RNA sequence: GGGAACGACUCGAGUAGAGUCGAAAAUACUGAUUAACAAAUUUCUACCCAUCUCAAGAAUUCAGGUUUCUGAUUAUGUGUACAAAGAUCCGUCCGCAGAAUUCAAGGAUUUAGGUCUGCAAGAGUAAUUAGUCAUAACUUUCGAGUUAUGACUAAUAAAAGAAACAACAACAACAAC
Reactivity to DMS in 0.01 (KOAc 150mM, MgCl2 10mM, bicine 150mM(pH8.5), 24C), signal-to-noise 6, nucleotides 027 to 126: u010a150c090u010g010a100u000u010a120a110c110a100a090a150u000u000u010c050u000a140c020c020c030a090u010c080u000c090a070a220g000a070a040u000u000c040a090g010g010u000u000u010c020u000g010a080u000u000a070u010g010u010g020u000a040c120a060a100a110g000a030u010c040c130g010u000c030c040g010c110a100g010a050a040u000u000c070a060a210g000g000a030u010u000u010a070g000g010u000c030u000g010c110a060a100g010a090g010u010a060
Reactivity to 2A3 in 0.01 (KOAc 150mM, MgCl2 10mM, bicine 150mM(pH8.5), 24C), signal-to-noise 3, nucleotides 027 to 126: u070a000c060u060g020a080u130u210a140a030c050a040a180a040u060u120u010c030u070a080c010c010c000a070u010c060u010c030a060a110g030a060a040u120u040c030a020g100g000u070u200u060c030u020g030a040u030u050a080u150g180u050g050u040a090c030a060a170a010g020a060u000c010c040g030u000c020c060g010c060a070g040a090a030u140u090c040a050a040g020g020a020u050u040u070a050g000g040u000c010u000g020c040a050a000g070a020g100u090a110